Chemical mapping of a 207-nucleotide RNA with 2A3.
RNA sequence: GGGAACGACUCGAGUAGAGUCGAAAAGGCAGGUGUUCUGCAGUGAGAAUCCUCUUGCCAAGUUUUUCUGGCCCAGAGGCAAUGGACUGGAGUGUCACAUCCCACAUCAGACAUCACUGGCUGUGGGCCACCCCAAGGGAGAUGGGCUAUAACCCUGGGGCUACAUAUGUUUCGACAUAUGUAGCCCAAAAGAAACAACAACAACAAC
Reactivity to 2A3 in 0.01 (KOAc 150mM, MgCl2 10mM, bicine 150mM(pH8.5), 24C), signal-to-noise 1, nucleotides 027 to 156: g010g000c060a050g000g000u000g100u080u000c010u060g050c040a020g080u120g080a050g110a050a020u300c010c060u090c080u070u120g040c020c020a120a060g010u140u090u030u170u040c040u090g000g010c000c020c000a020g000a010g030g000c100a060a030u020g020g020a070c030u030g060g060a030g020u090g030u010c050a030c010a240u160c020c060c000a030c000a050u050c000a010g170a220c010a070u040c030a020c010u010g030g020c010u020g020u000g030g010g010c000c000a030c000c010c000c020a030a030g030g000g030a180g080a040u140g010g010g000c000u200a090u100a150a040c000c000c000u020g060

High 2A3 reactivity points to a flexible backbone, as in loops and unpaired stretches.
The RNA was probed in 150 mM KOAc, 10 mM MgCl2 and 150 mM bicine (pH 8.5) at 24 C.
It was measured as part of the RMDB library OK3TST.